An RNA of 177 nucleotides, treated with DMS and 2A3 and read out base by base. For 2A3 the reverse transcriptase was SuperScript II with manganese. The DMS profile rests on 1,755 reads.
RNA sequence: GGGAACGACUCGAGUAGAGUCGAAAACACUGUCUUAGCUUAGCGACGGUUGGAACAUGCUCAGACAGUGACUCACUGGCUGCAAUGGCGUACGCACGUAGAUACAGGUUCCGUCGAAGACCGGUUCUGUGUCGCAGUUAUUCGUAACUGCGACACAAAAAGAAACAACAACAACAAC
Reactivity to DMS in 0.01 (KOAc 150mM, MgCl2 10mM, bicine 150mM(pH8.5), 24C), signal-to-noise 2, nucleotides 027 to 126: c040a000c000u010g010u000c020u000u010a050g030c010u000u000a110g030c040g020a200c020g010g020u000u020g010g010a110a060c040a080u000g010c000u010c070a020g010a020c010a010g010u020g000a120c060u020c030a070c110u010g000g000c020u020g010c050a080a090u010g010g000c030g020u000a040c130g020c040a030c100g000u010a070g000a100u010a050c060a110g020g010u010u000c030c000g020u000c030g030a120a090g010a070c070c020g000g010u010u000c060
Reactivity to 2A3 in 0.01 (KOAc 150mM, MgCl2 10mM, bicine 150mM(pH8.5), 24C), signal-to-noise 2, nucleotides 027 to 126: c000a000c000u000g020u000c000u000u000a020g010c010u140u110a030g060c080g120a050c020g050g150u110u090g110g010a110a030c050a110u090g000c020u020c010a000g010a000c000a000g000u020g030a010c000u000c020a120c070u050g120g000c020u060g010c060a050a120u140g020g040c000g020u070a010c080g020c000a030c020g050u050a040g030a080u040a110c030a040g000g000u010u050c020c040g030u030c030g040a090a040g050a050c020c000g000g040u110u000c020